[RMDB]
RNA sequence: GGGAACGACUCGAGUAGAGUCGAAAAUGGGUGAUCCGCAGCCAAGUCCUAAGGCAACAGGCCUCUUCCCGCCCGUGGGGGAGAGUGUCCCGCGCUAUGGAUGCAGUUCAACGACUAAACGGUGAUGGGCUAGCGUAAUGAAUGCGUUCUGCACACUAGUUCGUCUAAUCUUCGGAUUAGACGAACUAAAAGAAACAACAACAACAAC
Reactivity to 2A3 in 0.01 (KOAc 150mM, MgCl2 10mM, bicine 150mM(pH8.5), 24C), signal-to-noise 2, nucleotides 027 to 156: u120g000g030g010u070g010a070u010c000c020g000c090a010g020c080c010a080a000g030u000c030c010u080a110a130g050g000c030a010a060c050a030g010g000c010c000u030c000u010u000c060c010c000g190c040c090c010g150u240g020g020g000g000g000a000g000a010g000u030g000u080c000c020c020g020c010g000c010u030a040u140g000g000a010u090g010c050a080g000u140u080c010a080a020c080g180a050c070u180a120a020a120c080g080g000u100g020a120u130g020g000g040c000u010a080g000c010g050u050a050a160u180g060a070a010u140g010c010g040u130u040c070u100g030c040a030c000a030c060u020